[RMDB]
Source: RMDB library TTRINS, as collected in RNAgym. The record gives the reactivity of an RNA of 177 nucleotides to 2A3 and DMS. For 2A3, 4,051 sequencing reads were counted. 2A3 adducts were read by reverse transcription with SuperScript II with manganese. DMS adducts were read by reverse transcription with MarathonRT.
RNA sequence: GGGAACGACUCGAGUAGAGUCGAAAAGAUAUGGAGAUGGAACUACGAGUUGCCACAAAAGCUCGUUGAAAGAGCUCGGAAACGAGCUCUGGAGAGCUUUUGUGGGGACUCGCCAUCUCCUAAGUCAGAACAAUACAGAGUUCGCUCUGUAUUGUUCAAAAGAAACAACAACAACAAC
Reactivity to 2A3 in 0.01 (KOAc 150mM, MgCl2 10mM, bicine 150mM(pH8.5), 24C), signal-to-noise 2, nucleotides 027 to 126: g050a040u090a080u290g000g000a000g000a010u010g000g020a120a140c130u140a030c300g000a000g010u010u070g300c000c000a020c010a000a010a000a000g000c010u010c040g190u190u040g020a040a060a010g010a010g000c000u000c030g090g000a060a120a110c000g000a010g010c020u000c000u010g000g000a010g010a000g020c010u030u010u010u000g000u000g000g020g020g000a000c000u010c000g000c000c000a000u010c000u000c000c000u010a000a000g010u020c040a030
Reactivity to DMS in 0.01 (KOAc 150mM, MgCl2 10mM, bicine 150mM(pH8.5), 24C), signal-to-noise 2, nucleotides 027 to 126: g000a070u000a300u010g000g010a020g020a030u000g000g000a150a070c160u010a300c050g010a020g000u000u000g000c000c000a030c010a000a030a000a000g010c010u000c000g030u010u040g000a260a190a010g000a030g020c040u000c010g040g000a090a140a300c010g000a010g000c000u000c000u000g020g010a060g000a020g010c000u000u000u010u000g030u000g000g000g000g000a010c000u000c000g000c000c010a000u000c000u000c000c000u000a010a060g010u010c030a140